[RMDB]
RNA sequence: GGGAACGACUCGAGUAGAGUCGAAAAGACCAACAAGUCGAGCAGAUGCGAAAGCAGGCCCAAGUGAUCCGGCGGUAGAAAGUGGAAUUGCCGUCGCUCAACGGAUAAAAGGUACCUUAGGGAUAACGUUCAGAACGAAGUUCGCUUCGUUCUGAACAAAAGAAACAACAACAACAAC
Reactivity to DMS in 0.01 (KOAc 150mM, MgCl2 10mM, bicine 150mM(pH8.5), 24C), signal-to-noise 1, nucleotides 027 to 126: g000a160c000c010a080a100c230a020a070g010u000c010g020a050g020c030a090g010a090u000g030c070g020a080a040a120g010c010a090g000g010c010c000c000a100a210g040u000g020a030u010c100c060g030g000c100g000g000u000a010g040a010a070a080g010u050g010g030a150a110u000u000g010c000c010g030u000c010g000c190u020c040a030a070c110g000g000a090u020a110a060a040a040g000g000u000a070c030c000u000u020a050g040g000g010a070u010a050a170c140
Reactivity to 2A3 in 0.01 (KOAc 150mM, MgCl2 10mM, bicine 150mM(pH8.5), 24C), signal-to-noise 1, nucleotides 027 to 126: g010a000c050c020a040a080c050a080a040g100u060c010g000a020g000c070a060g060a070u050g000c020g080a110a000a000g000c010a000g010g040c030c000c000a000a000g030u010g030a030u040c020c010g000g000c000g000g020u030a000g140a100a110a040g120u190g060g040a070a090u160u040g030c010c040g000u000c000g000c010u000c010a030a050c000g000g040a030u130a050a040a000a010g090g000u050a050c000c000u030u090a040g070g000g000a010u070a090a020c050
About this RNA
This 177-nucleotide RNA was probed chemically with DMS and 2A3. For 2A3 the reverse transcriptase was SuperScript II with manganese. The RNA was probed in 150 mM KOAc, 10 mM MgCl2 and 150 mM bicine (pH 8.5) at 24 C. As a SHAPE reagent, 2A3 marks flexible, mostly unpaired nucleotides at the ribose 2'-OH.